[RMDB]
RNA sequence: GGGAACGACUCGAGUAGAGUCGAAAAUGUUUGUUUCACCAGGACGAGGAUGUGGCAUCAUAUUACUAGCCAUCGCACGAAAUUAAUAGGAUGGCACGUCCUCAUCUUAGAUGGAACAACCACGUCACUCCUUAAAGGUAUUCGUACCUUUAAGGAGAAAAGAAACAACAACAACAAC
Reactivity to 2A3 in 0.01 (KOAc 150mM, MgCl2 10mM, bicine 150mM(pH8.5), 24C), signal-to-noise 9, nucleotides 027 to 126: u070g010u010u010u020g000u000u000u010c010a010c010c010a010g010g000a000c020g000a000g010g000a000u000g020u010g020g110c000a000u000c000a000u010a010u020u020a030c080u050a040g080c050c060a190u120c090g030c040a070c100g100a080a070a070u060u020a010a010u020a020g030g010a000u000g030g120c000a000c000g000u000c000c000u000c000a000u000c000u000u020a080g010a040u010g000g000a000a000c010a000a000c030c010a060c030g140u110c050a020
Reactivity to DMS in 0.01 (KOAc 150mM, MgCl2 10mM, bicine 150mM(pH8.5), 24C), signal-to-noise 9, nucleotides 027 to 126: u010g000u000u000u000g000u000u000u000c000a010c020c020a040g000g000a010c040g020a010g010g010a010u000g010u000g000g000c010a010u000c010a040u000a000u000u000a020c200u000a150g010c080c130a090u010c220g000c170a120c130g010a090a080a080u020u000a010a010u000a010g000g000a010u010g000g000c010a010c000g010u000c000c000u000c000a010u000c000u000u000a080g010a030u000g000g000a010a010c000a010a020c040c050a060c140g000u010c100a150